[RMDB]
RNA sequence: GGGAACGACUCGAGUAGAGUCGAAAAGAAAGAAAGAAAGACUGAGUCCAUGAUGAUUUCAAGUUAUCCCUGUCUGAAGGCAAAGAAAGGCCUUUCUGUGUGGAAUUUGAAUAUCUGAAACUCAGAAUCAAUAGUACAAGUUCGCUUGUACUAUUGAAAAAGAAACAACAACAACAAC
Reactivity to DMS in 0.01 (KOAc 150mM, MgCl2 10mM, bicine 150mM(pH8.5), 24C), signal-to-noise 9, nucleotides 027 to 126: g000a100a070a080g010a110a070a080g000a100a090a110g010a200c010u000g000a010g000u000c060c100a100u010g000a060u000g000a060u010u000u000c000a010a010g000u010u010a070u020c010c000c030u010g010u040c080u000g000a010a010g010g000c010a040a080a170g020a090a150a160g000g010c000c010u000u010u020c050u010g020u010g010u020g030g000a040a020u000u000u000g000a010a010u020a010u000c010u000g000a170a100a030c010u000c010a000g000a110a130
Reactivity to 2A3 in 0.01 (KOAc 150mM, MgCl2 10mM, bicine 150mM(pH8.5), 24C), signal-to-noise 9, nucleotides 027 to 126: g100a020a040a010g120a040a090a010g100a050a110a000g070a020c000u010g000a000g010u020c070c050a050u090g010a010u020g020a030u030u040u010c010a010a000g010u030u070a150u200c010c000c010u040g110u140c050u030g030a010a000g010g000c020a100a110a080g130a140a200a050g170g000c000c010u020u070u010c040u010g120u010g090u220g000g010a010a010u010u000u000g020a030a020u050a010u070c000u020g020a040a010a010c000u000c000a000g020a010a030

Conditions: 150 mM KOAc, 10 mM MgCl2 and 150 mM bicine (pH 8.5), 24 C. This 177-nucleotide RNA was probed chemically with DMS and 2A3. Values cover nucleotides 27 to 126. DMS adducts were read by reverse transcription with MarathonRT. For 2A3 the reverse transcriptase was SuperScript II with manganese. It was measured as part of the RMDB libraries RFM100 and RFMREP.